The record gives the reactivity of an RNA of 177 nucleotides to DMS. It was measured as part of the RMDB library OK2TST. The RNA was probed in 150 mM KOAc, 10 mM MgCl2 and 150 mM bicine (pH 8.5) at 24 C. For DMS the reverse transcriptase was MarathonRT.
RNA sequence: GGGAACGACUCGAGUAGAGUCGAAAAUGCCGAACGCGUGCUGCUACGCCUGCGUGACACCAGCGCGGAAGCGAAACGCGAACUGGAUGAAAUCCGUGAAAGUUUGCAGGUUAAACAGAGUGGCUGAGGUCGAUAGUGCGUUCGCGCACUAUCGACCAAAAGAAACAACAACAACAAC
Reactivity to DMS in 0.01 (KOAc 150mM, MgCl2 10mM, bicine 150mM(pH8.5), 24C), signal-to-noise 1, nucleotides 027 to 126: u020g040c060c000g060a150a170c110g000c020g010u000g010c070u000g000c040u000a190c090g000c010c010u000g000c080g100u020g010a080c200a170c300c000a010g000c200g050c000g000g020a220a080g000c080g050a010a170a100c000g000c000g140a100a300c050u010g000g020a040u000g010a000a060a230u020c010c050g000u000g000a110a090a100g000u000u000u010g000c110a040g000g040u010u000a110a060a150c030a060g070a060g000u000g000g000c000u000g000a080